[RMDB]
RNA sequence: GGGAACGACUCGAGUAGAGUCGAAAAAGUGGACGAUACAUUACACCGAGCAAUUAAAUUACAGUCCACGCUCGGUCAUUAUUCUGGCGAGAGCCAGUUCACAGACAGCUAGCGAAAGGAAGGACCUAGCAGGAAGGAAGGAGCUAGCGCUAGGUCAGCAUAGUGACUACUUCGGUAGUCACUAUGCAAAAGAAACAACAACAACAAC
Reactivity to DMS in 0.01 (KOAc 150mM, MgCl2 10mM, bicine 150mM(pH8.5), 24C), signal-to-noise 1, nucleotides 027 to 156: a050g000u000g020g020a040c010g050a290u000a190c040a100u010u000a050c050a180c000c050g000a040g010c020a080a230u000u000a080a140a110u000u000a100c100a220g000u000c030c040a030c040g000c010u020c000g030g000u020c080a040u000u000a130u000u000c000u020g000g000c000g030a300g000a200g030c000c000a070g000u000u000c050a050c030a300g040a070c030a090g000c000u010a000g000c040g000a040a040a060g000g020a000a090g000g000a070c020c020u000a020g010c000a230g000g000a100a060g010g000a100a110g000g000a180g010c100u000a080g010c010g000c030u000a000g010g010u020c010a230
Reactivity to 2A3 in 0.01 (KOAc 150mM, MgCl2 10mM, bicine 150mM(pH8.5), 24C), signal-to-noise 3, nucleotides 027 to 156: a010g020u000g000g020a020c070g050a090u100a180c080a130u100u120a080c050a030c030c000g000a010g010c040a090a110u160u110a160a060a090u250u150a130c060a080g020u000c000c010a000c000g000c000u010c000g020g060u030c020a040u030u290a050u140u050c030u000g000g000c010g010a040g000a000g040c010c010a000g010u070u080c080a060c000a010g090a040c040a010g040c000u030a000g030c050g140a140a020a020g120g010a050a100g040g000a010c000c000u000a000g010c000a000g060g060a080a030g040g000a020a040g020g020a030g000c020u030a000g000c000g000c000u000a010g000g000u010c010a010